[RMDB]
RNA sequence: GGGAACGACUCGAGUAGAGUCGAAAAUUAGGGUAAUGACCUAUGAUUUGACAGACUGUGCUUUCUAUGUCUGCCUGUCAUUUCUGUAGGCCAAUACUCUGUAAACGGAGGACCUUCGGGUCCUCCGCUAACGCACGGAGUUCGCUCCGUGCGUUAGAAAAGAAACAACAACAACAAC
Reactivity to 2A3 in 0.01 (KOAc 150mM, MgCl2 10mM, bicine 150mM(pH8.5), 24C), signal-to-noise 1, nucleotides 027 to 126: u070u050a000g030g000g000u040a080a020u020g000a020c000c010u000a000u000g010a030u000u040u020g010a000c020a000g030a030c020u030g060u140g120c030u020u300u180c090u300a030u300g000u010c020u020g010c010c000u020g000u030c000a030u010u030u030c030u120g060u010a010g020g030c000c000a000a060u000a030c010u040c000u010g090u140a080a070a010c000g000g010a020g020g010a000c040c040u050u100c300g050g000g010u030c020c000u020c000c000g000
The record gives the reactivity of an RNA of 177 nucleotides to 2A3.
The reactions ran in a buffer of 150 mM KOAc, 10 mM MgCl2 and 150 mM bicine (pH 8.5), at 24 C.
Values cover nucleotides 27 to 126.
The 2A3 profile rests on 873 reads.
It was measured as part of the RMDB library RFMREP.